[RMDB]
RNA sequence: GGGAACGACUCGAGUAGAGUCGAAAAGAAGAUAAGAUACCAGACACCGUGGGCAGAUGACAAGAAAGUCCGUCGGUGUCGGUAAGGUCGUCAGUCACAGGCGACCGUUUUCUGUGACUGUAAAGAAAUGAUGAUACGACUUCGGUCGUAUCAUCAUAAAAGAAACAACAACAACAAC
Reactivity to DMS in 0.01 (KOAc 150mM, MgCl2 10mM, bicine 150mM(pH8.5), 24C), signal-to-noise 3, nucleotides 027 to 126: g020a080a040g000a020u010a110a090g010a270u000a020c000c000a150g070a010c000a010c010c000g000u000g000g010g000c000a040g030a190u000g000a130c300a180a160g000a070a170a050g010u000c000c000g040u040c020g000g000u000g000u010c000g000g000u000a030a040g000g000u000c000g000u000c000a090g000u010c180a030c150a090g020g000c090g010a060c020c010g000u040u010u020u010c010u000g020u000g010a130c060u000g010u000a050a110a060g050a040a080
Reactivity to 2A3 in 0.01 (KOAc 150mM, MgCl2 10mM, bicine 150mM(pH8.5), 24C), signal-to-noise 2, nucleotides 027 to 126: g030a050a050g020a050u180a050a070g040a030u160a050c000c010a000g000a000c000a000c000c000g000u030g000g000g000c030a080g070a240u100g120a170c050a160a050g100a120a010a000g000u010c000c000g060u100c010g000g000u000g020u000c020g000g020u000a000a000g060g070u060c070g000u020c000a040g070u080c070a000c000a040g000g020c010g050a100c030c010g010u190u040u020u000c000u010g000u000g080a040c050u030g050u090a110a050a000g070a010a140